RNA sequence: GGGAACGACUCGAGUAGAGUCGAAAAUCCUCGGCGGUAUCCGGCUGGCGCAAGCCAGCAUCCUGAGAGGGAUGGUAAAGGCAAAAGAAAUAAACGGUCUCCGGUAAAGCAUGAUUCCGAAGGGAUGAUUGGCUACUGAGUUCGCUCAGUAGCCAAUAAAAGAAACAACAACAACAAC
Reactivity to 2A3 in 0.01 (KOAc 150mM, MgCl2 10mM, bicine 150mM(pH8.5), 24C), signal-to-noise 1, nucleotides 027 to 126: u030c000c000u000c010g080g000c030g010g030u120a030u030c000c000g010g000c000u000g010g000c000g000c060a130a000g020c000c000a000g000c000a000u000c010c000u020g030a070g080a070g020g000g010a000u000g030g060u110a070a020a070g000g050c060a090a030a050a050g290a040a150a020u150a080a110a000c010g040g000u000c000u000c010c000g000g030u100a080a010a010g030c040a120u070g000a080u150u000c010c020g100a050a000g080g000g000a020u170g000
Reactivity to DMS in 0.01 (KOAc 150mM, MgCl2 10mM, bicine 150mM(pH8.5), 24C), signal-to-noise 2, nucleotides 027 to 126: u000c000c000u000c060g020g000c030g000g010u000a040u020c000c030g010g000c030u010g000g020c010g000c220a090a150g000c000c000a020g010c000a000u000c010c000u000g020a230g000a210g010g020g000a030u000g020g000u000a040a110a080g000g050c030a090a040a050a130g010a050a110a070u000a080a210a090c090g000g020u000c020u010c000c010g040g010u000a030a090a100g040c020a050u000g000a150u010u000c010c000g000a120a150g030g020g000a070u050g030